[RMDB]
RNA sequence: GGGAACGACUCGAGUAGAGUCGAAAAGGCUCUAAAAACAAACAGCGAUUUUGAGUUCACUGUGAGAUGGAUGGUUCACUCUGAUGAUAAUGCAACUUCUGUUGUUGCAAAGGGUGACAUAAAGAAGAGAACUAUAUGGUUUCGACCAUAUAGUUCUAAAAGAAACAACAACAACAAC
Reactivity to DMS in 0.01 (KOAc 150mM, MgCl2 10mM, bicine 150mM(pH8.5), 24C), signal-to-noise 9, nucleotides 027 to 126: g010g000c020u000c020u010a030a080a080a110a090c090a100a160a040c040a030g010c060g010a070u000u000u010u020g010a130g000u000u000c020a030c010u010g010u000g010a130g010a080u010g010g010a070u000g010g010u000u000c010a010c010u000c010u000g010a150u010g010a110u010a080a140u000g010c010a010a020c010u000u010c210u010g010u010u000g010u000u000g010c040a030a100a040g000g000g010u000g000a030c070a060u010a040a070a070g010a100a130g000
Reactivity to 2A3 in 0.01 (KOAc 150mM, MgCl2 10mM, bicine 150mM(pH8.5), 24C), signal-to-noise 8, nucleotides 027 to 126: g060g000c020u000c010u100a110a130a030a030a030c070a040a160a020c020a030g050c020g090a050u040u030u100u300g110a100g040u060u060c030a030c080u040g030u050g060a050g030a130u120g120g050a030u060g100g030u090u040c000a010c010u010c010u040g130a140u060g030a050u140a240a050u180g020c010a010a010c000u150u120c070u260g290u260u050g000u010u010g020c000a030a030a020g010g000g010u010g000a000c000a020u150a030a130a020g110a060a020g080
The data come from the RNA Mapping Database (RMDB), library OK2TRN. Structure probing data (DMS and 2A3) for a 177-nucleotide construct. 2A3 adducts were read by reverse transcription with SuperScript II with manganese. Reactivities are given for positions 27 through 126. The DMS profile rests on 18,527 reads.